An RNA of 207 nucleotides, treated with 2A3 and DMS and read out base by base. The 2A3 profile rests on 866 reads. The RNA was probed in 150 mM KOAc, 10 mM MgCl2 and 150 mM bicine (pH 8.5) at 24 C. As a SHAPE reagent, 2A3 marks flexible, mostly unpaired nucleotides at the ribose 2'-OH.
[RMDB]
RNA sequence: GGGAACGACUCGAGUAGAGUCGAAAAUUUUAAUGAUUUAAGAUGCAGCUUCAGGUAACAGUACACCUUCUGAUCCAAAGGUGAUUUCCAUAGGAACCAGAAGCAGCUGCAUGUAAUGGCAAGACCAUCAGACUCCCAGGGGAGAUGGAUUUAAAAACAUGUCGUACUUGUUCGCAAGUACGACAUGAAAAGAAACAACAACAACAAC
Reactivity to 2A3 in 0.01 (KOAc 150mM, MgCl2 10mM, bicine 150mM(pH8.5), 24C), signal-to-noise 1, nucleotides 027 to 156: u090u070u020u110a180a150u090g040a040u060u070u070a100a100g040a050u010g000c000a000g000c000u000u020c070a000g020g010u030a090a040c000a030g080u040a020c000a040c030c000u000u050c050u110g090a090u010c000c050a080a000a000g010g000u000g070a190u000u080u110c000c000a030u120a150g040g050a060a020c040c000a010g000a150a010g010c020a010g000c010u000g000c000a000u080g010u060a090a040u000g020g020c050a030a050g030a090c010c020a010u000c000a000g070a110c000u040c030c000c050a010g020g050g000g000a080g000a000u020g040g010a000u100u170u260a110a130a040a000a020
Reactivity to DMS in 0.01 (KOAc 150mM, MgCl2 10mM, bicine 150mM(pH8.5), 24C), signal-to-noise 1, nucleotides 027 to 156: u000u010u000u000a080a190u050g000a150u000u010u010a040a230g020a110u010g030c010a040g050c000u000u000c110a020g080g010u000a140a140c030a220g030u000a120c020a040c080c010u000u010c000u020g000a130u000c090c020a050a110a170g020g090u000g040a100u010u000u000c010c130a120u000a130g010g010a070a110c020c010a090g000a040a110g090c030a030g000c020u000g040c000a010u010g040u000a050a060u010g000g020c050a150a060g010a300c000c010a000u000c020a070g000a120c080u000c020c000c070a140g030g010g000g000a220g000a080u000g010g000a150u000u000u000a040a020a140a060a180